[RMDB]
RNA sequence: GGGAACGACUCGAGUAGAGUCGAAAACAAACCCAGAUCUGUGUCCAGCAGUCCUGAUCCAACCAGAGUAUUCGUGCUCUGGUUGUGUUUCGGUUGUUAUUGCUGGACAGCUCGACGAUUCAUGGAGAGAGGCCAUAAUCUUCGGAUUAUGGCCUCUAAAAGAAACAACAACAACAAC
Reactivity to 2A3 in 0.01 (KOAc 150mM, MgCl2 10mM, bicine 150mM(pH8.5), 24C), signal-to-noise 1, nucleotides 027 to 126: c060a010a210a060c000c000c000a020g000a140u040c070u020g100u000g000u040c000c000a040g040c000a000g000u000c000c000u000g000a000u000c000c000a000a020c010c000a000g000a000g020u040a080u200u300c270g080u110g000c000u000c000u000g000g000u000u000g000u000g000u000u090u000c020g000g000u000u010g070u070u100a000u010u010g000c000u000g000g000a010c000a000g000c010u030c000g100a080c070g040a050u110u160c210a170u170g060g000a090g000